Chemical mapping of a 207-nucleotide RNA with 2A3 and DMS. It was measured as part of the RMDB library OK3TST. The reactions ran in a buffer of 150 mM KOAc, 10 mM MgCl2 and 150 mM bicine (pH 8.5), at 24 C.

[RMDB]
RNA sequence: GGGAACGACUCGAGUAGAGUCGAAAAGUAUAGUUCUUUGUUCAUUGCUUCAUUCAUUCCUUUAUUCAGUACACAUAAUUGAGCUCCUAAAAUGUGACAGACUCUACACAAGACUAUGGGAAUAAAGAUUGAAUAGGACAGAGUACCUGCUCAGGGAAUAAUCAUUUAUGUUCGCAUAAAUGAUUAUAAAAGAAACAACAACAACAAC
Reactivity to 2A3 in 0.01 (KOAc 150mM, MgCl2 10mM, bicine 150mM(pH8.5), 24C), signal-to-noise 7, nucleotides 027 to 156: g070u080a080u140a170g030u090u020c000u040u030u060g040u020u040c080a120u080u220g090c060u100u100c030a040u010u010c000a020u040u080c010c000u040u030u040a050u040u040c030a030g100u130a090c060a000c010a080u100a100a090u150u070g040a030g040c030u050c030c010u120a160a150a090a080u140g030u040g030a010c010a030g030a050c010u000c030u120a060c100a020c030a100a070g030a020c040u080a070u110g100g010g000a000a010u020a030a050a000g010a000u010u040g000a020a010u050a110g020g000a010c010a020g030a010g020u020a030c010c020u020g020c050u050c070a030g060g000g030a050
Reactivity to DMS in 0.01 (KOAc 150mM, MgCl2 10mM, bicine 150mM(pH8.5), 24C), signal-to-noise 5, nucleotides 027 to 156: g020u000a080u000a080g010u000u000c010u000u000u000g020u000u000c070a170u010u000g020c100u000u000c070a110u000u000c030a040u000u000c110c030u000u000u010a030u020u000c010a210g020u000a140c100a070c040a050u000a050a120u010u010g000a130g000c040u000c030c020u000a050a060a090a070u000g020u010g010a110c070a140g000a070c050u000c020u000a080c070a110c090a000a160g000a070c060u000a030u000g010g000g000a040a030u000a010a030a060g000a070u000u000g020a040a030u000a140g030g000a060c010a050g000a080g010u000a060c030c010u000g010c060u000c050a110g020g020g020a100